The record gives the reactivity of an RNA of 207 nucleotides to DMS and 2A3.
The RNA was probed in 150 mM KOAc, 10 mM MgCl2 and 150 mM bicine (pH 8.5) at 24 C.
RNA sequence: GGGAACGACUCGAGUAGAGUCGAAAAUCAGCAUCGGCAUAUAACUGCGCUUUAAGAUAAAGAACAUCACCAGGAACUAAAUUAUAAUCAGAGAGUUUGCUUAUAGCAGCUGAAGUUGGAAAACGUGCAAUUUCGUUAUUGGUUCCACCGACAGCUGACUAUGUUUACCCUUCGGGGUAAACAUAGUAAAAGAAACAACAACAACAAC
Reactivity to DMS in 0.01 (KOAc 150mM, MgCl2 10mM, bicine 150mM(pH8.5), 24C), signal-to-noise 1, nucleotides 027 to 156: u010c020a040g040c030a160u000c050g020g080c050a100u000a130u010a020a070c000u010g000c080g010c020u000u000u000a160a110g010a130u010a040a090a110g020a040a060c050a050u010c040a080c030c020a120g000g010a050a140c040u010a020a080a170u000u000a080u000a000a130u000c000a140g010a240g000a200g000u000u000u010g000c000u000u000a080u010a140g040c020a010g020c030u000g000a110a180g000u000u000g040g000a080a050a100a090c030g000u010g030c030a100a050u010u010u010c060g000u010u010a120u000u000g030g000u010u000c000c010a080c050c000g030a140c140a070g030c050u000g060
Reactivity to 2A3 in 0.01 (KOAc 150mM, MgCl2 10mM, bicine 150mM(pH8.5), 24C), signal-to-noise 4, nucleotides 027 to 156: u040c000a000g020c010a030u050c010g040g040c080a020u110a020u060a190a110c060u070g010c040g000c060u100u120u100a100a070g010a090u140a140a180a010g020a080a040c040a070u100c030a040c100c020a020g070g010a040a030c010u050a070a050a080u300u160a120u170a150a060u130c050a010g040a010g000a020g090u050u090u090g030c010u070u050a060u100a200g020c020a010g000c010u030g040a060a000g020u030u030g000g040a030a100a030a050c050g040u070g000c080a100a180u040u090u130c020g010u090u090a040u080u120g110g000u050u000c000c010a010c010c000g010a020c020a010g000c000u000g000
Source: RMDB library OK3TST, as collected in RNAgym.